[RMDB]
RNA sequence: GGGAACGACUCGAGUAGAGUCGAAAAAGCGCGAAACUCACCACAAGAUGAGAAUUCCCUUGAAGGUCGUUGUAGACUACAACGUUGAUAGGAUGCAGAUGUACAGGUAGUAAUACCAAAGUCGAGCCGAACGAUCAAACUUCGGUUUGAUCGUUCGAAAAGAAACAACAACAACAAC
Reactivity to DMS in 0.01 (KOAc 150mM, MgCl2 10mM, bicine 150mM(pH8.5), 24C), signal-to-noise 1, nucleotides 027 to 126: a000g000c170g020c050g040a150a030a220c020u000c010a020c100c070a090c220a140a180g010a050u000g010a140g010a070a070u000u000c020c000c040u000u000g000a170a110g010g000u010c020g000u000u000g020u000a010g010a090c220u000a020c030a020a090c080g030u000u010g010a070u000a020g000g020a070u000g010c000a080g010a060u000g000u000a120c080a170g020g000u000a070g000u030a100a060u000a000c020c020a130a020a120g000u000c030g000a150g050c000